This 177-nucleotide RNA was probed chemically with DMS.
For DMS the reverse transcriptase was MarathonRT.
RNA sequence: GGGAACGACUCGAGUAGAGUCGAAAAAAGCAAUCAAAAAUAGUUGUAAGCUUUAAUUCACUGUAGUGCCUGGGCCAUCACUAAAUCUGGGUAGCUGACAGAGCACCAAAUUUAGACGCUGAUAUUGCCCUUAUGCUUGGUUCGCCAAGCAUAAGGGAAAAGAAACAACAACAACAAC
Reactivity to DMS in 0.01 (KOAc 150mM, MgCl2 10mM, bicine 150mM(pH8.5), 24C), signal-to-noise 1, nucleotides 027 to 126: a010a030g010c050a050a110u010c000a010a050a140a140a240u010a190g030u000u020g000u020a190a160g020c000u020u000u000a080a130u000u000c010a090c070u020g010u000a060g060u000g000c050c040u000g000g000g000c140c150a020u030c080a130c020u020a000a020a010u010c050u000g010g030g010u030a060g040c010u010g000a050c190a120g010a080g070c010a100c020c000a020a000a000u010u010u010a010g000a180c110g010c120u000g010a070u000a070u020u000g020
Values cover nucleotides 27 to 126. Values are in units of 0.01, from 0 to 300, in steps of 10. The RNA was probed in 150 mM KOAc, 10 mM MgCl2 and 150 mM bicine (pH 8.5) at 24 C.